Structure probing data (2A3) for a 177-nucleotide construct.
The data come from the RNA Mapping Database (RMDB), library RFM100.
For 2A3 the reverse transcriptase was SuperScript II with manganese.
The 2A3 profile rests on 836 reads.
2A3 is a SHAPE reagent: it acylates the 2'-hydroxyl of flexible nucleotides of all four kinds.
The reactions ran in a buffer of 150 mM KOAc, 10 mM MgCl2 and 150 mM bicine (pH 8.5), at 24 C.

RNA sequence: GGGAACGACUCGAGUAGAGUCGAAAAAGCAUACCGACUCUACGGAGUCGGUAUGCAGUGUAUUCUACAGUGCACGUGUCUCCAGUGUGGCUCGGAGGCUGGAGACGCGGCCCUGUUGGAGUAACAACGCCGUGAACUUGUUCGCAAGUUCACGGCGAAAAGAAACAACAACAACAAC
Reactivity to 2A3 in 0.01 (KOAc 150mM, MgCl2 10mM, bicine 150mM(pH8.5), 24C), signal-to-noise 1, nucleotides 027 to 126: a040g000c000a000u000a040c000c010g000a000c000u000c000u020a050c300g020g000a000g000u000c000g010g000u000a010u000g010c020a000g000u070g010u000a010u000u020c010u030a000c000a000g000u000g000c020a010c300g000u000g010u000c000u020c030c000a000g000u050g040u110g220g090c020u040c120g200g010a120g090g030c000u000g000g000a000g000a000c000g000c000g000g000c010c010c000u010g000u030u080g000g000a000g020u040a000a050c010a040a050